[RMDB]
RNA sequence: GGGAACGACUCGAGUAGAGUCGAAAAGAGAAGUUCAGGAACAAGUUCUACCUGGACGUGUCUCCUGGCAGGGGCACGCCCGACUGGCUGGACCCUGAGACGGCUGAGCAGCUGCGCCAUAGCGUGGAAUACAACCCGUCUUCGGACGGGUUGUAUUAAAAGAAACAACAACAACAAC
Reactivity to DMS in 0.01 (KOAc 150mM, MgCl2 10mM, bicine 150mM(pH8.5), 24C), signal-to-noise 2, nucleotides 027 to 126: g000a050g000a080a070g000u000u010c000a000g030g000a160a120c100a120a120g020u000u000c070u010a110c070c030u010g000g000a020c000g000u010g000u000c000u000c020c050u020g010g000c250a130g000g000g000g020c040a040c060g010c010c010c020g020a070c160u000g000g000c030u000g030g000a110c080c020c000u000g000a130g000a070c090g000g000c060u030g000a150g000c070a050g020c030u000g020c080g040c020c090a030u000a060g000c050g010u000g000g000
Source information:
The record gives the reactivity of an RNA of 177 nucleotides to DMS. For DMS the reverse transcriptase was MarathonRT. Conditions: 150 mM KOAc, 10 mM MgCl2 and 150 mM bicine (pH 8.5), 24 C. Values cover nucleotides 27 to 126.